Annotation:
The record gives the reactivity of an RNA of 177 nucleotides to DMS and 2A3. Values are in units of 0.01, from 0 to 300, in steps of 10. The reactions ran in a buffer of 150 mM KOAc, 10 mM MgCl2 and 150 mM bicine (pH 8.5), at 24 C. For 2A3, 17,359 sequencing reads were counted.
RNA sequence: GGGAACGACUCGAGUAGAGUCGAAAACGCGAUUAUAAUAUGCGCCGAUGCUAUACGCGGCGCUACGUACGGCCGAUGCAUGCAUAUCGAUGCAUGCAUUAGCAUCGAUUAAUAUCGUAUAAUUAGCCGAUUUUGAAGAAUUCGUUCUUCAAAAUCGAAAAGAAACAACAACAACAAC
Reactivity to DMS in 0.01 (KOAc 150mM, MgCl2 10mM, bicine 150mM(pH8.5), 24C), signal-to-noise 7, nucleotides 027 to 126: c120g000c020g010a020u000u000a080u000a080a130u000a080u010g010c020g020c020c000g010a070u010g000c110u010a080u010a150c170g010c010g000g010c000g020c010u000a010c120g010u000a110c290g000g010c020c010g010a020u010g000c000a010u000g010c000a020u000a150u020c270g000a040u000g010c010a010u000g010c000a010u000u000a020g010c010a030u010c010g010a180u000u010a070a150u000a060u000c030g020u010a060u010a050a070u010u000a070g020c080
Reactivity to 2A3 in 0.01 (KOAc 150mM, MgCl2 10mM, bicine 150mM(pH8.5), 24C), signal-to-noise 9, nucleotides 027 to 126: c050g010c000g000a010u010u080a060u120a230a090u090a050u180g000c000g000c010c010g030a050u060g050c140u180a070u030a280c140g000c000g020g000c000g010c000u010a010c010g020u050a030c090g060g000c010c000g000a000u010g000c000a000u000g000c030a000u220a080u210c140g290a020u040g000c000a000u010g000c000a000u000u000a000g000c000a030u070c010g030a020u050u070a120a070u080a020u110c010g000u030a050u040a200a180u110u100a050g040c030